An RNA of 207 nucleotides, treated with DMS and 2A3 and read out base by base. Values cover nucleotides 27 to 156. DMS adducts were read by reverse transcription with MarathonRT. The RNA was probed in 150 mM KOAc, 10 mM MgCl2 and 150 mM bicine (pH 8.5) at 24 C. For 2A3, 5,582 sequencing reads were counted.

[RMDB]
RNA sequence: GGGAACGACUCGAGUAGAGUCGAAAAUCACACUUCGGUGUGAGAAGCGGGGUCCGUUUGACGGAAAGACAUGCGACCAUGGCUGAAGCCUCCACGGCCAUAAUUCGCAACAGCUUUCCCGAGGACGGAGGCACCCUAACGUACCUUUCGAGGUAAAUACAUGAUAAAGCUUCGGCUUUAUCAUGUAAAAAGAAACAACAACAACAAC
Reactivity to DMS in 0.01 (KOAc 150mM, MgCl2 10mM, bicine 150mM(pH8.5), 24C), signal-to-noise 3, nucleotides 027 to 156: u010c000a010c010a010c020u000u020c300g050g000u000g010u000g020a010g000a060a090g000c120g000g020g020g020u000c030c020g010u000u020u000g000a300c240g030g000a000a030a030g030a060c060a230u000g030c000g010a040c300c130a040u000g010g020c000u000g010a070a080g000c020c010u000c020c030a300c060g000g010c000c000a040u000a020a090u020u000c080g060c030a080a110c110a170g000c020u000u000u010c000c000c000g000a230g010g000a040c010g010g020a080g070g020c040a070c000c000c010u000a070a050c050g000u000a050c010c000u000u000u000c140g000a060g010g020u000a020a080a280
Reactivity to 2A3 in 0.01 (KOAc 150mM, MgCl2 10mM, bicine 150mM(pH8.5), 24C), signal-to-noise 4, nucleotides 027 to 156: u000c000a000c000a000c000u030u090c280g100g000u010g000u030g000a040g050a030a020g150c190g000g010g000g020u010c030c010g020u030u060u080g000a000c000g020g030a000a000a010g010a050c120a200u260g000c000g000a010c020c040a010u000g010g000c010u020g030a120a040g040c020c010u000c020c020a050c040g020g000c010c000a020u060a040a120u070u020c000g000c020a150a150c050a190g020c000u000u000u000c010c000c000g010a010g000g000a010c010g000g000a010g010g010c020a080c010c000c000u050a110a040c040g090u060a010c000c000u080u110u160c240g060a030g010g020u060a040a030a110